[RMDB]
RNA sequence: GGGAACGACUCGAGUAGAGUCGAAAAUCUGCAAUCUUCGGAUUGCAGAAAAUACGGAUCCAUACGGAUCCAUACGGAACCAUACGGAUCCAUACGGAUCCAAAACGUACCUCUUCGGAGGUACGAAGACUUAAAUUCGGUUCGCCGAAUUUAAGUCAAAAGAAACAACAACAACAAC
Reactivity to 2A3 in 0.01 (KOAc 150mM, MgCl2 10mM, bicine 150mM(pH8.5), 24C), signal-to-noise 3, nucleotides 027 to 126: u010c000u000g020c000a010a000u000c000u020u040c090g100g010a000u000u000g000c000a000g000a000a020a000a010u110a020c050g010g010a010u010c010c010a010u080a170c080g000g010a000u000c000c000a000u050a010c070g080g100a060a040c060c000a030u050a120c060g000g000a000u010c010c010a010u070a100c070g000g000a010u000c010c000a020a000a000a010c000g000u000a000c000c000u010c000u030u050c230g090g000a000g000g000u000a000c000g000a000a010
Reactivity to DMS in 0.01 (KOAc 150mM, MgCl2 10mM, bicine 150mM(pH8.5), 24C), signal-to-noise 3, nucleotides 027 to 126: u000c000u000g000c000a000a000u000c000u000u020c240g040g020a020u000u010g000c000a010g000a010a030a080a090u010a080c210g010g010a000u000c000c000a090u010a050c150g000g000a020u000c000c000a000u000a010c110g000g010a090a110c130c040a170u020a090c110g010g010a010u000c000c000a120u000a030c150g000g000a020u000c010c010a030a000a080a170c000g010u000a000c000c000u000c010u000u020c150g010g010a020g000g000u000a000c000g000a040a050

Notes:
Conditions: 150 mM KOAc, 10 mM MgCl2 and 150 mM bicine (pH 8.5), 24 C. The record gives the reactivity of an RNA of 177 nucleotides to 2A3 and DMS. The DMS profile rests on 2,242 reads. Values cover nucleotides 27 to 126. It was measured as part of the RMDB library M2PK50.